[RMDB]
RNA sequence: GGGAACGACUCGAGUAGAGUCGAAAAAACGCUGGGAAUACGGCGCCUAGCUUCCGUCUUCUCAACAGCGUACUGAAGCGCGCACGGUACGACAUGAGAAGUUCGGAAGGGUCGUAUUCCUGUGCUGAAGCGCGCACGGCAACCGAAAGGUGCGAAAGAUACACGUGAACUUCGGUUCACGUGUAUCAAAAGAAACAACAACAACAAC
Reactivity to 2A3 in 0.01 (KOAc 150mM, MgCl2 10mM, bicine 150mM(pH8.5), 24C), signal-to-noise 3, nucleotides 027 to 156: a000a000c020g020c020u020g010g000g020a000a010u010a000c000g010g010c000g150c060c130u180a200g050c000u010u010c000c000g020u000c000u000u010c000u010c020a160a300c160a150g010c000g010u000a000c000u040g060a270a080g000c010g010c000g000c000a010c010g010g000u000a000c010g120a090c090a240u300g000a000g000a000a000g060u190u080c010g000g000a020a000g010g020g000u010c000g000u000a000u000u000c000c000u000g000u010g000c000u060g030a110a030g000c010g000c000g000c020a010c010g020g000c000a020a040c010c000g020a070a040a050g010g000u030g020c000g060a050a050a010